[RMDB]
RNA sequence: GGGAACGACUCGAGUAGAGUCGAAAAGGUAAACGUGACAUGGAAUGGUGUUGGGACGCCUCUGGAGACAGACACCACCAGCGCUUACACUCUGGAGCUGGCAGGAGACUGCGCCUUGAAGAGCGCCAAAGCUUAACAUGUUCGCAUGUUAAGCUUUAAAAGAAACAACAACAACAAC
Reactivity to 2A3 in 0.01 (KOAc 150mM, MgCl2 10mM, bicine 150mM(pH8.5), 24C), signal-to-noise 3, nucleotides 027 to 126: g060g030u070a060a070a050c070g040u040g090a060c040a140u090g020g070a130a090u070g030g030u040g060u050u060g040g050g040a070c050g040c040c000u050c040u070g060g000a080g020a040c030a020g060a010c000a020c030c000a010c010c010a020g030c030g000c020u040u050a030c080a040c090u080c040u070g030g020a040g010c020u020g030g040c030a080g030g000a050g010a010c010u030g010c000g030c010c000u020u020g060a100a020g060a020g050c020g000c010c010
Reactivity to DMS in 0.01 (KOAc 150mM, MgCl2 10mM, bicine 150mM(pH8.5), 24C), signal-to-noise 7, nucleotides 027 to 126: g010g010u010a030a060a070c070g010u000g010a090c110a090u010g010g010a090a090u010g010g020u000g010u010u000g000g000g010a120c120g000c060c050u000c070u010g010g010a120g000a120c060a110g010a090c050a060c030c030a110c020c020a050g010c040g000c060u000u000a080c100a130c090u010c070u000g000g010a140g000c030u000g010g010c050a060g010g010a150g000a120c060u010g010c030g000c100c030u010u000g010a080a090g000a080g000c040g010c040c150